[RMDB]
An RNA of 177 nucleotides, treated with 2A3 and read out base by base. Values cover nucleotides 27 to 126. The reactions ran in a buffer of 150 mM KOAc, 10 mM MgCl2 and 150 mM bicine (pH 8.5), at 24 C. The 2A3 profile rests on 770 reads.
RNA sequence: GGGAACGACUCGAGUAGAGUCGAAAAGCGAGAGGUUCUAGCGCGCGUCCUUUUAUCCGCGCACAAGUAUGACGCCUAGAACGUCAUUCCUACGGCCAUCGCCUAGGUCUUUACAACAACAGAGCAAGAUCGGCAUCCGAUUCGUCGGAUGCCGAUCAAAAGAAACAACAACAACAAC
Reactivity to 2A3 in 0.01 (KOAc 150mM, MgCl2 10mM, bicine 150mM(pH8.5), 24C), signal-to-noise 2, nucleotides 027 to 126: g170c130g000a090g050a000g110g010u030u000c030u110a090g000c000g000c020g000c030g200u090c010c000u070u020u040u050a210u100c020c020g010c000g000c030a070c060a080a050g070u000a040u160g150a110c010g000c000c020u000a010g000a030a000c020g060u000c000a000u000u000c010c020u030a030c080g070g000c000c000a060u080c020g060c000c000u040a020g060g070u010c000u010u140u100a070c030a090a000c020a060a000c050a010g120a000g150c000a040a040